[RMDB]
RNA sequence: GGGAACGACUCGAGUAGAGUCGAAAACCAGCUUGCCUGUGUCCUAGGGAAUUGGAAGGUCAUCCUUCACAGGAUCGUGUGGAAGUCCUGCUCGCGGCGGAAGCAUUAAAACCAUUCGAGCUAGUCAAAAACCGGCUGAUCUUCGGAUCAGCCGGAAGUAAUUACACGUCUUCGGACGUGUAAUUACAAAAGAAACAACAACAACAAC
Reactivity to 2A3 in 0.01 (KOAc 150mM, MgCl2 10mM, bicine 150mM(pH8.5), 24C), signal-to-noise 2, nucleotides 027 to 156: c000c000a000g010c060u070u140g020c000c010u010g000u030g020u160c030c060u070a080g060g010g060a160a170u130u110g070g050a080a060g040g080u130c040a070u060c030c040u040u130c070a030c000a010g040g010a070u050c030g040u040g020u040g060g030a060a010g040u030c010c030u050g050c030u020c000g030c030g070g000c020g000g020a030a000g030c010a020u060u180a060a050a050a090c000c040a060u060u120c000g030a010g050c040u050a010g120u090c090a040a020a020a100a090c000c020g020g010c010u000g000a000u020c000u010u090c200g050g000a000u000c000a000g000c000c000g000g000a000a010